[RMDB]
RNA sequence: GGGAACGACUCGAGUAGAGUCGAAAAAAGGGUGGGGUAAGAGCCCACCGCGCCGCUGGUGACAGUGGUGGCAAGGUAAACCCCACCGGGAGCAAGACCGAAUAGGGAUGACACGGGGCGGGCGAAAGUAUAAUUCUACGUUCGCGUAGAAUUAUACAAAAGAAACAACAACAACAAC
Reactivity to DMS in 0.01 (KOAc 150mM, MgCl2 10mM, bicine 150mM(pH8.5), 24C), signal-to-noise 5, nucleotides 027 to 126: a070a060g000g020g030u000g000g000g000g000u000a050a100g010a250g020c040c000c060a080c160c070g000c000g010c010c020g030c010u000g000g000u060g010a180c010a010g020u010g000g010u000g000g030c030a110a070g000g020u010a100a130a060c020c000c000c010a010c020c010g000g000g010a110g000c130a100a060g010a190c060c030g000a080a080u020a130g000g000g010a150u010g010a110c160a080c060g000g010g000g010c100g010g020g020c080g000a060a070a090
Reactivity to 2A3 in 0.01 (KOAc 150mM, MgCl2 10mM, bicine 150mM(pH8.5), 24C), signal-to-noise 7, nucleotides 027 to 126: a000a020g090g010g000u020g000g010g000g000u030a090a030g040a020g140c000c010c000a010c020c000g000c000g000c000c000g000c010u010g010g050u090g040a050c000a010g000u010g010g000u020g060g020c020a070a030g020g000u070a090a080a060c010c000c000c000a000c000c000g000g010g010a090g010c090a100a030g040a140c020c020g040a060a060u120a180g010g000g020a020u080g020a010c020a020c120g040g000g030g020c100g010g010g000c040g040a110a020a000
Source information
The record gives the reactivity of an RNA of 177 nucleotides to DMS and 2A3. For 2A3 the reverse transcriptase was SuperScript II with manganese.